[RMDB]
RNA sequence: GGGAACGACUCGAGUAGAGUCGAAAACGCUCGCGGCUGGUUGGUGCCCCGAAGUCGCAUGCCUUGAUGACGCGCCAUUCCACCUGGUAGCCCAUCCCCUCCAGCAGGUGAACGAACCGGCGCCAGGCAAUUCUUGUCCGUUCGCGGACAAGAAUUGAAAAGAAACAACAACAACAAC
Reactivity to DMS in 0.01 (KOAc 150mM, MgCl2 10mM, bicine 150mM(pH8.5), 24C), signal-to-noise 2, nucleotides 027 to 126: c150g000c060u000c100g000c050g000g010c020u000g020g040u000u020g000g030u000g010c020c010c040c170g000a040a070g020u000c020g020c030a160u000g030c040c040u000u000g010a110u000g010a110c190g000c010g030c030c000a300u000u000c020c000a050c000c010u020g000g040u000a110g030c040c030c030a130u000c040c020c030c010u010c030c040a160g000c020a000g000g010u000g020a140a150c130g000a050a070c210c110g010g010c020g020c020c030a030g010g010